[RMDB]
RNA sequence: GGGAACGACUCGAGUAGAGUCGAAAAGGGGUCGGUUUCGCUCCCUAAGACAGGUUAAGGGAGCUUUACUGAAGCCUCCACGGUAAAGCAUCGAUCUUAACUCGAGGGAGCGCAACCGACGGAGGCACCCAAACACGAGCGGUUCGCCGCUCGUGAAUCUAUAAAGAGUCUUCGGACUCUUUAUAGAAAAAGAAACAACAACAACAAC
Reactivity to 2A3 in 0.01 (KOAc 150mM, MgCl2 10mM, bicine 150mM(pH8.5), 24C), signal-to-noise 1, nucleotides 027 to 156: g030g000g040g000u010c000g000g000u000u000u000c000g000c000u010c000c000c020u020a070a000g010a000c010a010g060g040u030u020a020a020g060g050g020a070g030c020u010u000u000a000c000u000g090a110a010g000c000c000u000c000c000a000c000g010g010u000a000a010a000g000c030a190u190c140g150a070u060c030u000u000a000a000c000u000c060g010a000g000g000g010a010g040c010g000c000a000a000c000c020g000a000c020g000g000a000g000g000c010a050c000c030c000a010a140a000c000a010c020g000a010g000c000g060g040u120u220c220g050c160c010g030c020u020c020g000u000g000a010a020
Reactivity to DMS in 0.01 (KOAc 150mM, MgCl2 10mM, bicine 150mM(pH8.5), 24C), signal-to-noise 2, nucleotides 027 to 156: g010g020g000g050u000c030g060g000u000u030u000c040g020c000u000c000c020c000u000a210a180g020a170c300a040g000g010u000u000a030a020g000g010g000a220g000c000u000u010u000a000c020u000g020a060a110g020c000c000u000c000c000a300c040g010g000u000a020a000a020g000c030a210u010c210g010a250u000c010u000u000a020a040c030u000c020g010a020g000g030g020a030g020c000g010c070a020a010c020c000g030a000c010g000g020a040g060g090c040a130c000c020c000a150a170a230c020a000c000g000a030g000c010g000g030u010u000c300g020c030c030g000c000u030c000g020u010g010a080a130
About this RNA
The record gives the reactivity of an RNA of 207 nucleotides to 2A3 and DMS. Conditions: 150 mM KOAc, 10 mM MgCl2 and 150 mM bicine (pH 8.5), 24 C.